[RMDB]
RNA sequence: GGGAACGACUCGAGUAGAGUCGAAAAGAUAUGGAUGACUCGCGAUAAGAAGUCAUCGGAAACGAUGAUACUUCUUUUGACGCGAGAGUCCUAAGUCAAAACUUAGCUCGCUUCGGCGAGCUAAGAACUAACUAUGAGUGUUCGCACUCAUAGUUAGAAAAGAAACAACAACAACAAC
Reactivity to DMS in 0.01 (KOAc 150mM, MgCl2 10mM, bicine 150mM(pH8.5), 24C), signal-to-noise 7, nucleotides 027 to 126: g010a030u010a300u000g010g000a010u000g020a190c010u010c010g020c000g020a130u000a030a010g010a030a020g010u000c010a000u000c000g000g000a080a080a140c010g010a010u000g000a150u000a040c020u000u000c000u000u000u000u000g010a150c050g010c000g010a000g000a300g000u000c000c000u000a050a160g000u000c020a090a070a080a220c000u000u010a000g000c000u000c000g020c000u010u010c220g030g010c010g000a010g000c000u000a000a000g000a060a240
Reactivity to 2A3 in 0.01 (KOAc 150mM, MgCl2 10mM, bicine 150mM(pH8.5), 24C), signal-to-noise 6, nucleotides 027 to 126: g010a020u060a020u110g030g010a020u050g280a300c000u000c010g000c000g050a100u040a170a030g000a010a000g020u020c000a010u000c010g000g020a050a060a010c010g000a000u000g010a010u060a170c010u040u020c000u040u100u060u150g180a090c020g000c000g000a000g000a000g000u000c000c000u020a130a020g060u020c040a000a010a140a200c010u010u000a000g010c000u000c010g000c010u050u050c280g120g000c000g000a000g010c000u000a000a000g000a000a010